[RMDB]
Chemical mapping of a 177-nucleotide RNA with 2A3 and DMS. The 2A3 profile rests on 18,742 reads. It was measured as part of the RMDB library M2PK50. Conditions: 150 mM KOAc, 10 mM MgCl2 and 150 mM bicine (pH 8.5), 24 C.
RNA sequence: GGGAACGACUCGAGUAGAGUCGAAAAGAAGGCACUUUCGAGUGCCUUCAUGGGGAGCUCAGGUCUCCCUCCCUUGCAAACUCCCUAAGGCAGGAGACCUAAUUAGGUGCACUUUCGAGUGCACCAAUUACCUUACACUAUUCGUAGUGUAAGGUAAAAAAGAAACAACAACAACAAC
Reactivity to 2A3 in 0.01 (KOAc 150mM, MgCl2 10mM, bicine 150mM(pH8.5), 24C), signal-to-noise 6, nucleotides 027 to 126: g000a000a000g010g010c040a010c020u070u090u210c280g110a010g010u000g000c000c000u000u000c000a000u010g000g000g000g010a000g010c040u060c220a010g060g010u000c000u000c010c000c000u000c000c000c000u000u050g050c050a070a050a120c050u070c010c000c000u100a090a040g220g000c060a020g010g050a010g000a000c000c000u010a020a090u110u130a040g000g000u000g000c000a000c010u090u070u110c280g070a000g000u000g000c000a000c000c000a000a000
Reactivity to DMS in 0.01 (KOAc 150mM, MgCl2 10mM, bicine 150mM(pH8.5), 24C), signal-to-noise 7, nucleotides 027 to 126: g010a000a010g000g020c000a000c000u000u010u010c150g020a020g020u000g010c000c000u000u000c000a020u000g000g000g010g000a010g010c060u010c150a010g000g020u000c000u000c000c000c000u000c010c000c000u000u010g020c220a080a100a150c170u010c010c000c010u010a100a110g010g010c240a090g000g000a010g020a010c010c010u000a140a090u010u000a080g010g010u000g000c000a010c000u000u000u020c180g000a020g010u010g010c000a000c000c000a010a010
Source information: Values cover nucleotides 27 to 126.